[RMDB]
RNA sequence: GGGAACGACUCGAGUAGAGUCGAAAAGAUGACCGGUUCGCCGGUCAUCAAAUAGGGAAACGGCGUGCGGGGCACCGUCCGCGGAACAAACGGAAAAUAAAAAAACGCUAACCUUCGGGUUAGCGAAGAAUAGAAUAUUGUUCGCAAUAUUCUAUUCAAAAGAAACAACAACAACAAC
Reactivity to DMS in 0.01 (KOAc 150mM, MgCl2 10mM, bicine 150mM(pH8.5), 24C), signal-to-noise 4, nucleotides 027 to 126: g000a020u000g000a010c010c010g020g000u000u000c280g020c000c010g020g000u000c010a000u000c000a030a080a070u020a140g010g010g000a130a100a110c070g010g000c160g010u000g020c080g020g010g000g010c080a080c080c050g030u010c040c010g020c040g000g010a120a090c080a040a090a060c090g000g000a090a090a090a070u030a030a020a090a090a080a080a160c020g020c000u000a000a000c000c000u000u030c210g040g000g010u000u010a000g020c000g000a010a030
Reactivity to 2A3 in 0.01 (KOAc 150mM, MgCl2 10mM, bicine 150mM(pH8.5), 24C), signal-to-noise 3, nucleotides 027 to 126: g000a000u000g000a010c000c010g020g030u050u040c120g030c070c000g000g000u000c000a000u000c000a000a000a000u080a010g000g010g040a080a060a040c060g070g000c050g020u050g000c050g060g010g090g020c080a030c090c030g010u020c000c020g000c030g000g020a030a040c050a050a090a010c020g100g050a080a070a070a000u260a050a170a020a010a000a000a010c020g000c000u000a000a000c000c000u010u040c210g060g000g000u000u000a000g000c000g000a000a000